[RMDB]
Chemical mapping of a 177-nucleotide RNA with DMS and 2A3.
For DMS the reverse transcriptase was MarathonRT.
RNA sequence: GGGAACGACUCGAGUAGAGUCGAAAAGCAUCCGCGGCUCAGCCAAGCUGUUGUUUUAAAAGAGCAAUAAAAAUGAAUUAUGACUAAACGCCUUCUAACUUAAUGCUUUCGGACGGGGAUCCCCGGCUACAAUUCACUAUUUCGAUAGUGAAUUGUAAAAAGAAACAACAACAACAAC
Reactivity to DMS in 0.01 (KOAc 150mM, MgCl2 10mM, bicine 150mM(pH8.5), 24C), signal-to-noise 6, nucleotides 027 to 126: g010c080a060u000c020c040g030c080g000g000c040u010c070a090g030c050c070a090a090g020c030u000g010u000u000g010u000u010u010u000a030a060a090a090g000a060g010c030a070a060u030a020a070a100a110a080u010g010a090a080u020u010a060u030g000a090c060u010a040a110a110c100g000c020c030u010u000c040u000a060a060c080u010u020a080a060u000g000c040u000u000u010c050g000g010a070c020g000g000g000g000a100u010c060c000c000c060g020g000c110
Reactivity to 2A3 in 0.01 (KOAc 150mM, MgCl2 10mM, bicine 150mM(pH8.5), 24C), signal-to-noise 8, nucleotides 027 to 126: g020c010a050u020c010c000g010c040g050g010c010u040c090a020g040c020c020a080a030g000c040u020g030u130u020g010u010u050u030u090a100a140a040a020g100a020g000c030a040a040u130a130a110a050a030a020u160g070a050a080u180u110a110u240g050a010c020u070a110a090a030c050g010c010c000u050u030c030u070a040a100c010u070u170a100a030u150g010c000u020u050u060c010g040g000a040c020g000g010g010g020a020u060c010c000c000c000g010g000c000
2A3 is a SHAPE reagent: it acylates the 2'-hydroxyl of flexible nucleotides of all four kinds. The RNA was probed in 150 mM KOAc, 10 mM MgCl2 and 150 mM bicine (pH 8.5) at 24 C.